[RMDB]
RNA sequence: GGGAACGACUCGAGUAGAGUCGAAAACGAACUCGUGGCUCGCGUUAAGUCACCGCUGCGAUUCAUUAUUGUCUCCUAGAUAACAACAAAUGGCAGAGAAAGGCAGUGAAAAUCCGCGGCCAGAGAACGACACUGAGCUAGCAGCGGCCACAGAAGCACAUCAACAAUGCUUCGGCAUUGUUGAUGUAAAAGAAACAACAACAACAAC
Reactivity to 2A3 in 0.01 (KOAc 150mM, MgCl2 10mM, bicine 150mM(pH8.5), 24C), signal-to-noise 3, nucleotides 027 to 156: c010g020a050a000c010u030c070g150u030g040g010c130u140c190g000c020g030u040u140a170a060g050u050c070a040c090c020g020c000u030g000c050g120a080u030u010c090a100u060u200a180u060u080g020u030c020u020c060c030u050a020g040a150u290a180a050c150a030a000c010a030a110a170u130g040g000c050a030g010a000g110a230a060a000g060g000c050a050g010u020g070a070a000a000a040u080c050c010g000c000g000g010c000c010a000g030a020g010a000a030c120g100a000c000a020c180u080g010a070g100c010u080a050g040c040a010g000c020g060g000c000c000a050c000a050g090a060a000g140c100
Structure probing data (2A3) for a 207-nucleotide construct. The reactions ran in a buffer of 150 mM KOAc, 10 mM MgCl2 and 150 mM bicine (pH 8.5), at 24 C. Values cover nucleotides 27 to 156. Reactivities are rounded to 0.1 and cut off at 0 and 3. For 2A3 the reverse transcriptase was SuperScript II with manganese.